[RMDB]
This 177-nucleotide RNA was probed chemically with 2A3 and DMS. The DMS profile rests on 3,103 reads. Conditions: 150 mM KOAc, 10 mM MgCl2 and 150 mM bicine (pH 8.5), 24 C.
RNA sequence: GGGAACGACUCGAGUAGAGUCGAAAACGUGUUCUUGAAACCAGUAAAGAAGAUCGAUUCCAGUGUCGUCAUAAAGUAUCUGGAAAACGAAUUGUUCAUGACGUUCGGAGUCCCCGAAGUGAUACUGCAAAAUGGAGUGCUUCGGCACUCCAUUUUGAAAAGAAACAACAACAACAAC
Reactivity to 2A3 in 0.01 (KOAc 150mM, MgCl2 10mM, bicine 150mM(pH8.5), 24C), signal-to-noise 2, nucleotides 027 to 126: c030g010u000g090u250u000c030u080u000g120a050a040a090c040c000a100g050u110a000a060a110g040a040a000g000a050u010c000g070a070u000u030c020c030a060g000u080g060u060c010g000u000c050a050u220a230a120a010g070u160a030u070c000u030g050g000a000a020a000a000c030g010a030a040u030u150g110u050u050c030a020u170g060a030c060g050u040u040c050g050g090a080g110u040c050c000c000c020g030a070a020g010u010g050a070u060a220c040u100g010
Reactivity to DMS in 0.01 (KOAc 150mM, MgCl2 10mM, bicine 150mM(pH8.5), 24C), signal-to-noise 3, nucleotides 027 to 126: c120g000u040g000u010u010c020u020u000g000a050a080a110c160c090a110g000u000a070a110a060g000a020a030g000a070u020c030g020a140u000u010c000c000a030g000u000g010u000c050g000u040c190a130u040a090a120a100g020u030a030u000c000u000g000g010a060a040a090a070c010g000a030a060u030u020g030u020u000c020a060u010g000a080c070g000u000u010c030g020g000a140g000u000c020c050c040c050g030a100a110g020u020g000a100u030a010c010u000g040
The data come from the RNA Mapping Database (RMDB), library OK1LIB.